[RMDB]
RNA sequence: GGGAACGACUCGAGUAGAGUCGAAAACGCAUGCGAGAGCAUGCGGCUAAGCUUCGGCUUAGUAAGAGCAACUUAGGAUUUUAGGCUCCCCGGCGUGUCUCGAACCAUGCCGGGCCAAACCCAUAGGGCUGGCGGUCCCUGUGCGGUCAAAAUUCAAGCGACAUAGCACGUUCGCGUGCUAUGUGGCAAAAGAAACAACAACAACAAC
Reactivity to DMS in 0.01 (KOAc 150mM, MgCl2 10mM, bicine 150mM(pH8.5), 24C), signal-to-noise 1, nucleotides 027 to 156: c010g020c000a020u000g020c030g030a290g010a300g010c000a000u010g000c020g030g000c000u000a020a050g010c080u010u000c300g050g030c000u000u000a000g020u020a040a080g010a110g010c030a060a050c040u020u010a040g010g030a070u000u010u000u000a160g060g000c000u010c020c000c010c010g030g000c000g030u010g000u000c060u000c230g040a160a200c220c030a030u000g060c000c000g000g020g010c030c020a060a060a070c020c010c000a060u000a000g000g020g000c010u010g000g010c060g010g050u000c000c000c020u000g000u000g030c090g000g030u000c030a000a030a020a070u000u020c000a230a300
Reactivity to 2A3 in 0.01 (KOAc 150mM, MgCl2 10mM, bicine 150mM(pH8.5), 24C), signal-to-noise 4, nucleotides 027 to 156: c010g000c000a000u000g010c000g010a050g000a000g050c010a000u000g000c000g000g000c000u000a000a000g000c000u030u140c290g090g000c000u010u010a000g000u030a060a030g000a000g000c000a010a070c060u020u030a030g010g020a020u020u010u000u040a020g020g010c010u000c000c000c000c000g000g000c000g010u020g010u010c060u050c270g080a050a030c050c000a000u020g000c000c000g010g010g000c000c000a010a000a000c000c000c000a000u010a000g020g000g000c030u060g120g060c070g060g030u140c000c000c000u000g000u000g020c170g000g000u030c030a000a000a010a030u030u010c030a090a020
Structure probing data (DMS and 2A3) for a 207-nucleotide construct. 2A3 adducts were read by reverse transcription with SuperScript II with manganese. It was measured as part of the RMDB library OK3TST. The RNA was probed in 150 mM KOAc, 10 mM MgCl2 and 150 mM bicine (pH 8.5) at 24 C.